[RMDB]
RNA sequence: GGGAACGACUCGAGUAGAGUCGAAAAAGUGUAGUAUCUGUUCUUUUCAGUUUAAUCUCUGAAAGUGUUCCAUAGGAACACAACAUUGAUUAAUCUUAUUUUUGGUCUCCGUGGCAGGGCCCCUGUGCUGAACACCGAUAUUCGUAUCGGUGUUCAGAAAAGAAACAACAACAACAAC
Reactivity to DMS in 0.01 (KOAc 150mM, MgCl2 10mM, bicine 150mM(pH8.5), 24C), signal-to-noise 1, nucleotides 027 to 126: a060g010u010g000u000a050g000u000a040u030c070u010g000u020u000c070u000u000u030u000c090a010g000u000u000u000a000a010u000c000u000c030u000g000a050a080a060g000u000g010u000u000c000c010a190u050a130g010g010a010a010c000a000c000a080a300c000a000u040u000g010a010u010u010a000a010u000c000u010u000a040u030u020u010u030u000g000g000u020c020u010c010c030g000u000g000g040c030a070g000g030g010c040c000c000c000u020g020u000g000
Reactivity to 2A3 in 0.01 (KOAc 150mM, MgCl2 10mM, bicine 150mM(pH8.5), 24C), signal-to-noise 3, nucleotides 027 to 126: a000g110u100g020u060a080g030u020a110u040c060u100g040u030u040c000u040u090u010u030c030a010g000u020u000u000a000a010u000c000u000c010u010g050a120a070a070g030u000g000u000u000c020c000a110u160a140g040g010a000a000c000a010c000a000a040c000a010u000u020g000a000u000u000a000a010u000c060u070u080a160u120u080u030u070u080g050g000u000c020u010c030c020g020u050g030g020c030a040g000g040g000c020c000c000c000u060g030u070g030